[RMDB]
RNA sequence: GGGAACGACUCGAGUAGAGUCGAAAAGAUAUGGAGAUGACGCACUAACUAUUCUUUCGGAAACGAAAGAACGAAUUAGUGAACUACGUCGCUCCUAAGUCAAAAUCCCAAUCUUCGGAUUGGGAAAGUCCCUUAAAGAGUUCGCUCUUUAAGGGACAAAAGAAACAACAACAACAAC
Reactivity to 2A3 in 0.01 (KOAc 150mM, MgCl2 10mM, bicine 150mM(pH8.5), 24C), signal-to-noise 3, nucleotides 027 to 126: g000a020u050a040u100g010g000a040g140a200u140g000a020c010g010c040a000c020u010a030a000c030u030a040u050u000c010u000u020u010c010g000g030a070a060a030c010g000a000a000a000g000a000a010c030g030a130a300u020u010a010g000u000g030a060a020c040u110a040c050g000u000c000g020c000u000c000c000u000a190a010g040u030c040a000a020a020a300u020c020c000c000a000a000u030c010u040u070c280g130g000a010u000u000g000g000g000a000a000a020
Reactivity to DMS in 0.01 (KOAc 150mM, MgCl2 10mM, bicine 150mM(pH8.5), 24C), signal-to-noise 3, nucleotides 027 to 126: g020a050u000a300u010g000g000a000g000a050u010g030a000c010g000c000a010c000u010a020a020c060u000a290u000u000c000u010u000u000c010g000g000a120a060a230c000g000a000a000a010g000a010a000c090g010a060a100u000u000a000g000u000g030a090a080c120u010a300c010g010u000c000g000c000u000c000c000u020a020a080g000u010c030a070a110a130a140u000c000c000c000a000a000u010c000u000u010c190g030g000a010u000u000g000g000g000a000a000a100

Source: RMDB library TTRDEL, as collected in RNAgym.
Structure probing data (2A3 and DMS) for a 177-nucleotide construct.
The 2A3 profile rests on 4,701 reads.
The RNA was probed in 150 mM KOAc, 10 mM MgCl2 and 150 mM bicine (pH 8.5) at 24 C.
For DMS the reverse transcriptase was MarathonRT.
2A3 is a SHAPE reagent: it acylates the 2'-hydroxyl of flexible nucleotides of all four kinds.